[RMDB]
RNA sequence: GGGAACGACUCGAGUAGAGUCGAAAAGCUGCUAUGAACCCUCGUAACACCGUUUUUGACGCCAAGCGUCUUAUUGGUCGUCGUUACGAAGACCCUGAGACUCAAAAGGAUAUUAAGCACUGGCCCACAUAAUGCGUAGUUUCGACUACGCAUUAUGAAAAGAAACAACAACAACAAC
Reactivity to 2A3 in 0.01 (KOAc 150mM, MgCl2 10mM, bicine 150mM(pH8.5), 24C), signal-to-noise 7, nucleotides 027 to 126: g010c030u030g000c020u050a060u210g110a100a090c030c010c000u000c020g000u010a010a010c010a020c020c030g040u030u010u010u110u170g020a000c010g030c040c100a270a060g050c010g030u010c040u040u070a130u060u120g070g010u050c050g060u030c030g000u040u010a020c010g010a030a020g020a030c020c000c000u070g040a050g080a120c040u060c220a040a060a040a020g040g000a030u050a050u210u150a060a010g010c010a000c030u030g040g020c000c000c000a050
Reactivity to DMS in 0.01 (KOAc 150mM, MgCl2 10mM, bicine 150mM(pH8.5), 24C), signal-to-noise 8, nucleotides 027 to 126: g020c200u000g030c030u000a060u000g010a110a150c160c040c030u000c020g010u010a030a030c040a090c080c040g000u000u000u000u000u000g010a020c010g020c020c130a080a140g030c120g010u000c040u010u000a040u000u000g020g010u010c100g020u000c090g000u000u010a040c030g010a030a050g000a170c060c010c090u000g010a090g000a070c090u010c110a070a060a110a080g000g000a090u000a060u000u020a050a050g010c010a030c040u000g000g010c010c000c020a210
Source: RMDB library OK2TRN, as collected in RNAgym. Structure probing data (2A3 and DMS) for a 177-nucleotide construct. Reactivities are given for positions 27 through 126. Values are in units of 0.01, from 0 to 300, in steps of 10. The DMS profile rests on 11,604 reads. For 2A3, 12,498 sequencing reads were counted.